[RMDB]
RNA sequence: GGGAACGACUCGAGUAGAGUCGAAAAGCAUCGACGACGGUCCUGCCAUGAGACCGUAACGAGGACAUGUCGCCUCGAAUGGCGUCGGGGUGCCGGCAGCUUACCCCAAGGAUGAGCGCCUAAUGCCUAUACCCGAUUCGCUUCGGCGAAUCGGGAACCCAUCACGUCGAUUCGUCGACGUGAUGGGAAAAGAAACAACAACAACAAC
Reactivity to 2A3 in 0.01 (KOAc 150mM, MgCl2 10mM, bicine 150mM(pH8.5), 24C), signal-to-noise 1, nucleotides 027 to 156: g060c040a080u180c030g060a040c010g000a000c000g030g010u010c010c000u080g180c100c000a190u190g060a080g020a190c000c000g000u000a010a030c000g010a000g110g000a020c040a140u300g030u120c040g010c000c020u030c030g000a140a150u170g110g000c010g020u060c010g000g020g000g000u020g000c020c030g080g000c020a030g000c030u090u060a070c000c000c000c040a030a050g170g000a110u070g070a010g000c020g000c040c000u010a020a130u180g020c030c000u070a070u050a160c000c000c000g000a000u000u020c000g000c000u050u030c140g070g010c000g000a050a000u000c000g000g020g000a000a000